RNA sequence: GGGAACGACUCGAGUAGAGUCGAAAAAGAUCGAUUACGAUCGAUCAAUGAUGCCCCUCACCCACCUCUUAAGAUCCCAGGUGGGCGAGGGAACGGAGCACGGGAUCACGAGCAGUACGCUGCUCGAAAAAGAACUAGACCUUCGGGUCUAGUUCAACAUUUCGUCAUCGUUCGCGAUGACGAAAUGAAAAGAAACAACAACAACAAC
Reactivity to 2A3 in 0.01 (KOAc 150mM, MgCl2 10mM, bicine 150mM(pH8.5), 24C), signal-to-noise 1, nucleotides 027 to 156: a010g000a030u000c020g000a010u010u060a090c180g020a040u030c000g010a010u000c020a000a070u210g060a060u160g110c020c000c000c010u030c010a010c000c000c000a000c010c000u020c010u060u160a070a010g000a010u000c010c000c000a000g010g010u000g000g000g000c010g000a000g000g000g040a050a060c130g130g050a060g060c140a130c090g000g010g010a010u000c010a020c020g000a000g000c000a000g000u150a030c300g020c100u000g010c000u000c000g020a000a000a000a000a000g000a000a000c000u000a000g000a000c010c010u010u080c200g060g000g000u000c000u000a000g000u010u000c000a000a000